The data come from the RNA Mapping Database (RMDB), library OK2TST. Chemical mapping of a 177-nucleotide RNA with DMS and 2A3. For 2A3 the reverse transcriptase was SuperScript II with manganese. High 2A3 reactivity points to a flexible backbone, as in loops and unpaired stretches. The DMS profile rests on 40,106 reads.
RNA sequence: GGGAACGACUCGAGUAGAGUCGAAAAAAACAUGAUAGAAGUGGUCGAUGGGCAACGUAAGCUCAGUGAGUGUAAACGAAUCGUUGUUAAAAUCGGAUCAUCUUUACUCACGGCAAAUGGGCAGGGAUCACUGCCCAUUAUUCGUAAUGGGCAGUGAAAAAGAAACAACAACAACAAC
Reactivity to DMS in 0.01 (KOAc 150mM, MgCl2 10mM, bicine 150mM(pH8.5), 24C), signal-to-noise 9, nucleotides 027 to 126: a050a050a060c090a060u000g010a090u010a100g010a060a050g030u000g010g010u000c030g010a060u000g010g010g010c030a040a040c090g000u010a090a140g010c030u000c040a120g020u010g010a040g020u000g010u010a050a150a070c170g000a070a070u000c020g020u000u000g010u000u010a050a040a080a030u000c020g020g010a040u000c020a040u000c050u000u000u000a040c120u000c020a020c040g000g010c090a030a050a080u000g000g000g010c040a050g000g010g010a170
Reactivity to 2A3 in 0.01 (KOAc 150mM, MgCl2 10mM, bicine 150mM(pH8.5), 24C), signal-to-noise 9, nucleotides 027 to 126: a010a000a000c090a080u100g020a030u040a090g080a070a010g030u020g030g020u030c010g020a050u040g010g040g010c010a010a000c020g040u060a060a030g000c020u000c130a060g080u060g070a020g000u060g030u110a070a090a030c060g020a040a050u050c020g020u010u040g050u080u110a140a160a030a040u040c030g050g010a010u030c010a010u020c030u020u020u020a030c010u010c010a020c010g030g000c040a020a060a110u120g000g010g020c030a020g020g030g020a000
For 2A3, 21,452 sequencing reads were counted.